RNA sequence: GGGAACGACUCGAGUAGAGUCGAAAAUGGCACUGCUAGGCAAUCUGAUCAUGGAAGAUUUGGCUGCGGACUUUGAUUUAGACCCAAUCAAGGAACCAGAAGUUACCCACUAUGAUGCAAAUUGGGACCAUACCCUACGCUUCGGCGUAGGGUAUGGAAAAGAAACAACAACAACAAC
Reactivity to DMS in 0.01 (KOAc 150mM, MgCl2 10mM, bicine 150mM(pH8.5), 24C), signal-to-noise 2, nucleotides 027 to 126: u000g030g000c020a160c000u000g000c080u010a120g000g030c000a070a020u030c050u020g050a170u000c020a040u030g000g010a100a140g030a140u000u050u010g000g000c000u000g000c060g060g020a160c050u030u000u000g000a050u020u000u030a070g000a130c090c020c030a060a010u030c130a120a060g000g010a000a060c030c010a090g000a050a020g000u000u030a120c020c010c000a120c110u000a050u000g000a060u010g010c060a090a060a040u080u010g030g000g030a300
Reactivity to 2A3 in 0.01 (KOAc 150mM, MgCl2 10mM, bicine 150mM(pH8.5), 24C), signal-to-noise 4, nucleotides 027 to 126: u040g090g000c010a010c040u020g000c020u070a050g020g010c010a000a060u060c060u100g050a070u050c040a120u180g030g060a040a080g020a130u050u110u110g120g000c010u000g000c000g020g000a010c000u000u050u010g030a020u050u030u060a200g030a120c010c030c000a000a020u020c010a000a010g070g010a050a090c000c020a020g020a100a030g080u060u130a070c000c010c000a040c020u080a080u180g110a020u040g110c040a020a060a100u060u070g030g000g000a000